RNA sequence: GGGAACGACUCGAGUAGAGUCGAAAAAGAGUGGACGUCUGUCCUCCUUAGAAUGCCCAGGACGGACCGCGGGGAGGUGGAGAUGCCAUGCCGACCCGAAGAGGAAAGAAGGAGACCGGACGCAAACCUACUCGAAUAUGUUCGCAUAUUCGAGUAGAAAAGAAACAACAACAACAAC
Reactivity to DMS in 0.01 (KOAc 150mM, MgCl2 10mM, bicine 150mM(pH8.5), 24C), signal-to-noise 2, nucleotides 027 to 126: a030g010a110g040u000g000g010a170c020g020u020c000u000g000u000c020c000u000c020c000u010u010a080g010a120a040u020g020c010c000c020a120g000g000a160c060g010g010a150c050c050g030c020g010g000g010g010a200g010g010u000g010g010a170g010a090u010g030c060c020a080u000g000c010c000g000a280c020c000c030g000a050a050g000a090g000g000a100a090a110g000a050a010g000g010a060g000a060c080c040g000g000a030c040g000c090a070a090a080c150
Reactivity to 2A3 in 0.01 (KOAc 150mM, MgCl2 10mM, bicine 150mM(pH8.5), 24C), signal-to-noise 2, nucleotides 027 to 126: a000g210a050g020u160g040g050a050c000g010u000c050u050g010u030c000c030u010c020c000u040u030a090g070a240a080u180g050c000c000c030a020g020g020a030c030g000g020a020c050c010g030c020g040g000g050g000a040g020g010u030g070g050a180g010a080u200g110c060c000a040u140g000c020c010g020a010c020c010c010g010a040a000g050a060g000g050a040a060a030g040a020a000g020g000a010g010a010c020c050g000g020a020c010g000c050a020a050a090c010
The data come from the RNA Mapping Database (RMDB), library VIROID. The record gives the reactivity of an RNA of 177 nucleotides to DMS and 2A3. DMS adducts were read by reverse transcription with MarathonRT. The RNA was probed in 150 mM KOAc, 10 mM MgCl2 and 150 mM bicine (pH 8.5) at 24 C. For 2A3, 1,655 sequencing reads were counted. The DMS profile rests on 1,512 reads.